[RMDB]
RNA sequence: GGGAACGACUCGAGUAGAGUCGAAAAGAAAACAUGGAAACAUGCAGGUGGCCACCCGCCCGGGCCACCGUUACUCCACUCCUCUCCUUCGGGACUGGUUUGGAGGAACAUAACAGGGCAAAAAAAAUACAACAUCCUAGUUCGCUAGGAUGUUGUAAAAAGAAACAACAACAACAAC
Reactivity to DMS in 0.01 (KOAc 150mM, MgCl2 10mM, bicine 150mM(pH8.5), 24C), signal-to-noise 1, nucleotides 027 to 126: g000a070a100a060a190c010a020u000g000g020a220a090a210c010a010u010g000c080a120g050g000u000g000g010c010c000a080c090c100c190g020c000c000c000g000g000g030c020c000a000c010c020g000u000u000a000c010u000c000c000a010c000u000c000c020u000c150u000c010c000u000u030c200g000g000g020a010c010u000g000g000u000u000u000g010g000a000g000g000a000a020c050a140u000a110a120c220a050g040g000g000c000a000a000a000a020a050a090a020a100
Description:
This 177-nucleotide RNA was probed chemically with DMS. The DMS profile rests on 931 reads. Reactivities are rounded to 0.1 and cut off at 0 and 3. Source: RMDB library M2PK90, as collected in RNAgym.